Chemical mapping of a 177-nucleotide RNA with DMS and 2A3. The RNA was probed in 150 mM KOAc, 10 mM MgCl2 and 150 mM bicine (pH 8.5) at 24 C. It was measured as part of the RMDB library OK2TST. DMS adducts were read by reverse transcription with MarathonRT. Values are in units of 0.01, from 0 to 300, in steps of 10.
RNA sequence: GGGAACGACUCGAGUAGAGUCGAAAAUGGCUGUGGACAAUCGUUUCAAUCUGACUGGCUAUUGUAUUUGCGGCAACUGGAGCAACAUUGAUUGUCAGCGUCUGCUUCAUCAAAUUUACAACUGAGGACCCUCUUACUGGUUCGCCAGUAAGAGGGUAAAAGAAACAACAACAACAAC
Reactivity to DMS in 0.01 (KOAc 150mM, MgCl2 10mM, bicine 150mM(pH8.5), 24C), signal-to-noise 2, nucleotides 027 to 126: u010g000g000c050u010g040u010g010g010a060c050a060a030u010c080g000u000u010u010c020a080a140u010c120u000g010a140c090u010g010g000c030u000a080u000u000g020u000a080u000u000u010g030c150g010g020c050a040a100c080u010g010g000a060g020c060a060a010c040a070u000u000g000a120u000u020g000u000c020a060g030c070g010u000c090u010g000c050u000u000c020a040u020c080a000a050a080u000u000u000a070c160a050a140c140u000g030a150g000g000
Reactivity to 2A3 in 0.01 (KOAc 150mM, MgCl2 10mM, bicine 150mM(pH8.5), 24C), signal-to-noise 2, nucleotides 027 to 126: u100g060g000c030u080g000u060g050g010a020c010a010a020u010c000g030u020u110u120c020a030a090u090c050u090g070a040c050u020g080g000c030u000a040u060u060g050u070a100u040u050u080g030c010g050g020c050a150a020c050u060g040g030a060g010c000a000a030c010a110u060u000g040a080u110u130g130u130c030a000g050c030g000u030c060u030g020c030u020u010c000a110u020c020a030a090a060u130u200u130a100c070a170a030c090u080g050a060g060g130